[RMDB]
RNA sequence: GGGAACGACUCGAGUAGAGUCGAAAAGGAAAGCAAAUCCUUGGCAGUACCAUGUUGGAAGAUGAAUUCACACCUGAGGAUGUUAAUAUGCAGAUUAUGGGUGUGGUUAUGCAGAGUGGUGUGAGAACCUGAUAUUUCACUUCGGUGAAAUAUCAGGAAAAGAAACAACAACAACAAC
Reactivity to DMS in 0.01 (KOAc 150mM, MgCl2 10mM, bicine 150mM(pH8.5), 24C), signal-to-noise 2, nucleotides 027 to 126: g020g000a030a040a110g020c200a100a120a090u000c010c000u000u000g010g000c050a110g010u000a120c030c030a060u000g010u000u000g000g030a130a030g000a100u000g010a100a090u000u020c000a020c010a030c030c000u000g000a090g000g010a080u000g000u000u020a080a100u010a080u000g000c030a020g010a100u010u000a060u000g010g010g020u000g000u000g000g010u010u000a050u000g000c050a090g010a170g030u010g010g010u010g000u000g000a150g000a120a160
The data come from the RNA Mapping Database (RMDB), library 15KREP. Structure probing data (DMS) for a 177-nucleotide construct. DMS adducts were read by reverse transcription with MarathonRT. For DMS, 1,439 sequencing reads were counted.